[RMDB]
Chemical mapping of a 170-nucleotide RNA with 2A3.
RNA sequence: GGGAACGACUCGAGUAGAGUCGAAAAUCUGGGUUUUAGCUUAUUUUAGUAAGAAACAUGUAGAAGUUUUUACUGAUGGUAAGCUUAAUUGUAGUUUCCAGGACGCUGCCUCUAAUAUCUUUGUUAUAACGCGAGGCGUUCGCGCCUCGCAAAAGAAACAACAACAACAAC
Reactivity to 2A3 in 0.01 (KOAc 150mM, MgCl2 10mM, bicine 150mM(pH8.5), 24C), signal-to-noise 1, nucleotides 027 to 129: u100c060u090g020g000g010u030u030u070u080a040g000c000u010u000a000u000u020u000u090a000g040u000a050a020g140a300a000a000c000a080u180g170u130a000g070a250a010g120u010u010u010u010u010a000c000u000g000a010u070g000g000u000a000a000g000c000u000u000a000a070u000u120g010u000a050g020u000u020u090c000c010a050g140g040a000c120g000c000u000g000c000c000u040c010u120a050a020u070a000u070c050u000u000u040g070u080u090a160u050a070a000c030
The data come from the RNA Mapping Database (RMDB), library 15KLIB. Conditions: 150 mM KOAc, 10 mM MgCl2 and 150 mM bicine (pH 8.5), 24 C. Reactivities are given for positions 27 through 129. Values are in units of 0.01, from 0 to 300, in steps of 10.